[RMDB]
Annotation: An RNA of 177 nucleotides, treated with 2A3 and DMS and read out base by base. The 2A3 profile rests on 3,906 reads. DMS (dimethyl sulfate) methylates the pairing face of unpaired adenines and cytosines.
RNA sequence: GGGAACGACUCGAGUAGAGUCGAAAAGAUAUGGACAGUGGACAUGCUCAGUGAUCGGAAACGAUCAGAGCAACAGCCAUAGUCCUAAGUCAAAACGUCCUUAGGACGUUCGCGUCCUAAGGACGAAGUUAGCAUAGCACUUCGGUGCUAUGCUAACAAAAGAAACAACAACAACAAC
Reactivity to 2A3 in 0.01 (KOAc 150mM, MgCl2 10mM, bicine 150mM(pH8.5), 24C), signal-to-noise 2, nucleotides 027 to 126: g010a010u050a040u110g000g000a000c040a070g000u000g000g040a030c060a170u100g000c020u020c020a230g270u040g090a000u000c020g000g010a080a030a030c030g000a000u000c020a020g000a000g000c030a020a020c020a030g000c010c000a000u020a060g020u000c000c010u020a120a020g080u000c040a010a020a090a150c030g010u000c010c000u000u000a000g030g030a020c040g080u050u090c300g030c020g060u000c010c010u000a010a000g020g010a000c000g010a000a000
Reactivity to DMS in 0.01 (KOAc 150mM, MgCl2 10mM, bicine 150mM(pH8.5), 24C), signal-to-noise 2, nucleotides 027 to 126: g010a040u000a260u000g010g000a010c020a300g050u000g000g020a010c090a240u000g000c000u000c000a130g010u000g000a000u000c010g030g020a060a020a160c000g000a010u000c000a040g000a030g000c000a020a030c250a130g020c000c000a000u000a140g000u000c000c000u000a040a110g000u000c040a090a030a130a170c010g020u000c000c000u000u000a010g010g010a030c000g000u020u000c150g000c010g000u000c000c000u010a000a030g000g010a000c000g010a010a020

Source: RMDB library TTRDEL, as collected in RNAgym. Conditions: 150 mM KOAc, 10 mM MgCl2 and 150 mM bicine (pH 8.5), 24 C. Reactivities are rounded to 0.1 and cut off at 0 and 3.